RNA sequence: GGGAACGACUCGAGUAGAGUCGAAAAGAUAUGGACGACCAUAGACCCACCGAAGAACUCGGAAACGAGGGAGGUGCUAUCCCUCGUCCUAAGUCAAAAGCGAAGCUCCGUUCGCGGAGCUUCGCAAGUCACAUGGUCAGUUCGCUGACCAUGUGACAAAAGAAACAACAACAACAAC
Reactivity to DMS in 0.01 (KOAc 150mM, MgCl2 10mM, bicine 150mM(pH8.5), 24C), signal-to-noise 1, nucleotides 027 to 126: g000a170u000a100u000g000g000a190c280g000a100c040c050a070u000a040g000a190c050c100c010a170c130c040g010a020a100g010a060a220c010u000c000g020g010a100a100a030c020g010a010g000g000g010a020g040g060u000g000c130u010a090u000c040c040c010u000c000g000u000c030c010u010a020a040g000u010c080a010a040a080a150g010c000g000a000a000g060c000u000c000c030g030u000u020c230g030c030g070g010a020g010c000u010u000c020g000c000a050a000